The data come from the RNA Mapping Database (RMDB), library 15KREP. An RNA of 177 nucleotides, treated with DMS and 2A3 and read out base by base. The RNA was probed in 150 mM KOAc, 10 mM MgCl2 and 150 mM bicine (pH 8.5) at 24 C.
RNA sequence: GGGAACGACUCGAGUAGAGUCGAAAAGACUUAUGCAAACAUAGUCUACGAGCCCACUACUCCCAUUUCGUCAGCGCUGAUUGCAGUUGCAAAUUGGCUUGCCCCCACUAAUGCUUAUAUGCGCACUGAUUAGUGAAGUGUUCGCACUUCACUAAUCAAAAGAAACAACAACAACAAC
Reactivity to DMS in 0.01 (KOAc 150mM, MgCl2 10mM, bicine 150mM(pH8.5), 24C), signal-to-noise 1, nucleotides 027 to 126: g050a070c000u020u000a020u010g000c230a120a070a270c060a030u000a010g010u010c000u010a090c170g020a110g000c000c010c030a070c090u000a140c060u000c000c010c000a130u000u000u000c100g000u020c120a040g010c090g010c050u010g010a080u020u000g010c020a110g000u020u000g030c040a030a070a070u010u000g010g010c020u000u020g010c010c020c020c010c040a050c110u010a090a050u010g000c040u040u010a090u000a100u000g030c020g010c200a150c200u020
Reactivity to 2A3 in 0.01 (KOAc 150mM, MgCl2 10mM, bicine 150mM(pH8.5), 24C), signal-to-noise 1, nucleotides 027 to 126: g020a000c010u100u050a060u090g010c160a020a170a160c020a080u080a000g000u000c010u030a010c010g080a030g030c000c010c000a000c070u210a070c050u010c020c010c010a030u040u140u040c070g070u020c020a020g020c000g000c040u010g050a090u000u110g010c000a120g070u190u120g000c010a000a050a140u050u030g070g000c010u040u090g010c040c000c000c000c020a030c030u030a000a070u070g010c000u000u080a170u070a030u260g010c040g000c050a020c120u000
Reactivities are given for positions 27 through 126.